[RMDB]
RNA sequence: GGGAACGACUCGAGUAGAGUCGAAAAAGCUGGUUAAUUGAGAAGAACCCAUACGCUGACUUGGCAUCUGAAGGAAAAGCUCCAUACAUUUCUGAACUAGCUCUAAAGAAGCUGUAUCUGAAUCAAGGUCGAUAUGAUACUUCGGUAUCAUAUCGACAAAAGAAACAACAACAACAAC
Reactivity to DMS in 0.01 (KOAc 150mM, MgCl2 10mM, bicine 150mM(pH8.5), 24C), signal-to-noise 2, nucleotides 027 to 126: a080g000c040u010g010g010u010u000a070a070u000u030g010a080g070a120a200g000a100a130c000c120c000a030u020a060c080g060c050u010g000a220c010u000u000g000g020c110a110u000c070u030g000a120a100g010g020a050a030a100a090g020c010u010c040c070a100u010a000c140a050u010u030u000c000u000g000a080a030c060u000a030g010c010u000c020u010a030a080a090g020a100a080g000c010u000g010u000a010u010c000u000g000a130a030u110c180a030a120g010
Reactivity to 2A3 in 0.01 (KOAc 150mM, MgCl2 10mM, bicine 150mM(pH8.5), 24C), signal-to-noise 4, nucleotides 027 to 126: a000g010c060u060g040g050u080u080a150a120u230u160g090a070g010a190a000g050a080a030c030c000c000a010u020a040c060g010c050u020g040a060c000u070u120g000g010c000a030u050c120u100g050a130a060g080g030a070a100a040a060g040c050u000c020c000a050u060a210c040a090u050u060u000c040u010g010a030a020c010u000a040g020c000u000c030u130a210a210a050g090a070a010g030c010u020g020u070a160u000c040u060g090a050a070u080c030a060a050g170
Structure probing data (DMS and 2A3) for a 177-nucleotide construct. The reactions ran in a buffer of 150 mM KOAc, 10 mM MgCl2 and 150 mM bicine (pH 8.5), at 24 C.